[RMDB]
RNA sequence: GGGAACGACUCGAGUAGAGUCGAAAAAGAGGGUCUUGCUAUGUUGUCCAGGCUGGUCUCGAACUCUAGGCCUCAGGUAACCCUCCUGCCUCAGCCUCUCAUAGUGCUUGGAUUAUAGGCGUGAGCCAACUACCUAAUAAUUCGUUAUUAGGUAGUUAAAAGAAACAACAACAACAAC
Reactivity to DMS in 0.01 (KOAc 150mM, MgCl2 10mM, bicine 150mM(pH8.5), 24C), signal-to-noise 9, nucleotides 027 to 126: a080g010a070g010g010g010u000c070u000u000g010c050u000a070u010g010u000u000g010u000c030c040a050g000g010c040u000g010g010u000c030u000c100g010a080a080c090u000c050u000a100g010g010c040c030u000c080a030g010g010u000a060a090c050c020c010u000c020c030u000g010c040c010u000c090a080g000c020c020u000c070u000c060a070u000a070g010u000g010c030u000u000g010g000a080u000u000a080u000a080g010g010c010g010u010g010a160g010c040c040
Reactivity to 2A3 in 0.01 (KOAc 150mM, MgCl2 10mM, bicine 150mM(pH8.5), 24C), signal-to-noise 6, nucleotides 027 to 126: a000g070a050g020g020g020u030c050u100u050g030c030u050a070u250g090u100u070g030u100c020c000a010g010g020c030u070g000g030u040c020u000c070g030a100a050c020u010c020u110a050g050g000c010c000u030c020a020g050g020u040a080a070c010c010c000u000c010c010u040g020c010c000u040c010a010g010c000c000u010c010u010c010a070u060a070g060u060g050c010u020u030g030g020a060u100u050a090u170a100g010g020c030g030u040g030a010g020c010c000